[RMDB]
RNA sequence: GGGAACGACUCGAGUAGAGUCGAAAAAGAAACGAUAACAAUCUUUCGCUCUGGAUCAGAAUUAACAAUAUUUAAAACCUUUUUAAUUUGAGUAGCAUUGGAGACGGAGCUACCACCGAAUUUGGAAUGCACUUUUACUCUUCGGAGUAAAAGUGCAAAAAGAAACAACAACAACAAC
Reactivity to 2A3 in 0.01 (KOAc 150mM, MgCl2 10mM, bicine 150mM(pH8.5), 24C), signal-to-noise 2, nucleotides 027 to 126: a000g080a070a000a000c200g070a120u050a110a040c000a010a120u040c030u000u060u090c090g000c000u000c000u030g100g100a190u010c030a020g220a050a010u190u170a080a000c040a000a020u120a230u080u170u300a120a180a060a140c110c060u270u150u000u060u300a100a110u060u040u080g170a110g000u120a000g070c250a070u000u110g250g000a070g040a130c000g000g000a010g000c000u030a060c010c010a080c030c040g020a010a020u150u050u000g080g000a110a070
This 177-nucleotide RNA was probed chemically with 2A3. Values are in units of 0.01, from 0 to 300, in steps of 10. As a SHAPE reagent, 2A3 marks flexible, mostly unpaired nucleotides at the ribose 2'-OH. It was measured as part of the RMDB library OK1LIB. The reactions ran in a buffer of 150 mM KOAc, 10 mM MgCl2 and 150 mM bicine (pH 8.5), at 24 C. 2A3 adducts were read by reverse transcription with SuperScript II with manganese.